[RMDB]
RNA sequence: GGGAACGACUCGAGUAGAGUCGAAAAUGCCAAGUGGUGAGUACUAUGGGACCCCUUUUGCUUGCUAUUCUGUCCUAUUUUUCCUUAGAAUUUGGGGGCUAAACACUGGGCACCCAUUGGCCAGUUAAAAGUGACUAGCACGGCCACUGGACUAAAGGAUCCCAAUCUAAUUCGUUAGAUUGGGAUCAAAAGAAACAACAACAACAAC
Reactivity to DMS in 0.01 (KOAc 150mM, MgCl2 10mM, bicine 150mM(pH8.5), 24C), signal-to-noise 1, nucleotides 027 to 156: u000g020c000c000a050a070g000u000g040g010u010g020a110g010u010a080c040u000a120u010g000g040g030a080c010c030c020c050u000u000u000u000g020c040u010u010g020c030u010a130u000u010c060u000g050u000c010c010u010a070u000u020u010u020u000c020c060u000u000a090g020a090a120u010u000u010g000g010g010g050g020c040u000a050a050a050c060a030c010u010g020g010g010c040a150c030c010c030a210u000u010g010g030c030c020a150g030u000u000a030a040a070a070g010u000g010a100c050u000a080g040c160a090c100g000g020c030c000a030c020u010g020g020a120c040u000a080a090a140g020
Reactivity to 2A3 in 0.01 (KOAc 150mM, MgCl2 10mM, bicine 150mM(pH8.5), 24C), signal-to-noise 3, nucleotides 027 to 156: u120g020c000c000a040a050g010u030g020g010u030g030a100g010u070a060c060u060a030u090g030g020g090a140c000c010c000c040u010u090u100u080g030c040u050u080g010c010u040a100u090u060c060u040g110u000c040c000u060a260u040u050u000u040u110c010c010u120u090a110g030a170a110u120u090u130g050g000g000g000g000c010u040a090a040a000c020a010c050u040g000g000g010c020a090c010c010c030a020u030u030g010g020c000c000a020g020u050u120a060a110a030a060g060u080g080a060c010u010a050g030c050a020c040g030g000c000c000a000c000u020g000g010a000c030u110a100a060a060g110

This 207-nucleotide RNA was probed chemically with DMS and 2A3. It was measured as part of the RMDB library OK3TST. The DMS profile rests on 2,790 reads. For 2A3 the reverse transcriptase was SuperScript II with manganese. Reactivities are given for positions 27 through 156. The RNA was probed in 150 mM KOAc, 10 mM MgCl2 and 150 mM bicine (pH 8.5) at 24 C.